[RMDB]
RNA sequence: GGGAACGACUCGAGUAGAGUCGAAAAGUGUCACUACUUAGACCUUGUGUCUCCUCAUCUCAACUAAACGAAAUUUUAUCCAUCGCACACAUGUUCGCAUGUGUUUGCGUAUGGUGCAAUUGAAAUUAUGCUUUCAUUACUUCGGUAAUGAAAGCAUAAAAGAAACAACAACAACAAC
Reactivity to 2A3 in 0.01 (KOAc 150mM, MgCl2 10mM, bicine 150mM(pH8.5), 24C), signal-to-noise 2, nucleotides 027 to 126: g050u060g060u110c020a020c130u200a020c030u080u060a000g010a020c000c010u030u200g080u030g020u090c020u020c010c010u050c000a150u050c040u020c030a060a160c060u180a120a070a120c080g120a060a020a080u070u090u080u120a070u000c000c000a000u010c020g000c000a000c000a010c000a020u010g040u050u070c210g000c110a000u000g000u000g000u010u030u130g000c000g000u060a020u000g030g000u000g000c000a030a030u030u090g080a100a040a020u070u020
Reactivity to DMS in 0.01 (KOAc 150mM, MgCl2 10mM, bicine 150mM(pH8.5), 24C), signal-to-noise 1, nucleotides 027 to 126: g010u010g000u000c140a190c290u020a040c150u000u010a100g010a080c050c050u000u030g050u020g010u010c000u000c040c010u010c140a160u000c050u010c110a040a110c130u000a020a030a140c140g000a070a080a050u000u000u000u020a100u000c000c040a010u000c010g030c000a020c000a010c000a000u010g020u000u020c200g010c020a010u000g040u000g010u000u010u020g020c020g030u010a000u000g020g010u000g000c300a010a050u000u000g000a040a100a020u000u000
Structure probing data (2A3 and DMS) for a 177-nucleotide construct. Conditions: 150 mM KOAc, 10 mM MgCl2 and 150 mM bicine (pH 8.5), 24 C. Reactivities are given for positions 27 through 126. For 2A3 the reverse transcriptase was SuperScript II with manganese.